[RMDB]
This 177-nucleotide RNA was probed chemically with DMS. Reactivities are given for positions 27 through 126. For DMS the reverse transcriptase was MarathonRT.

RNA sequence: GGGAACGACUCGAGUAGAGUCGAAAAGAUAUGGAGUGCUAAUCUUCGAUAAGUACGUAACGUACCACGGUCGGAAACGACCGUGGUACGUUACGGUACUUUUGACGAAGACAACACUCCUAAGUCAUCUAAAGUACAGGUUCGCCUGUACUUUAGAAAAAGAAACAACAACAACAAC
Reactivity to DMS in 0.01 (KOAc 150mM, MgCl2 10mM, bicine 150mM(pH8.5), 24C), signal-to-noise 2, nucleotides 027 to 126: g020a020u000a300u010g000g020a030g020u000g010c030u020a270a300u000c000u000u000c000g010a120u000a020a020g000u000a010c010g040u000a010a020c000g070u000a010c000c000a000c000g010g010u000c000g010g000a140a110a240c000g010a040c010c040g050u000g020g030u000a000c000g020u000u000a010c000g020g030u010a000c000u000u000u000u000g000a170c090g020a020a000g010a020c120a060a170c010a010c000u000c000c000u010a010a120g010u000c000a180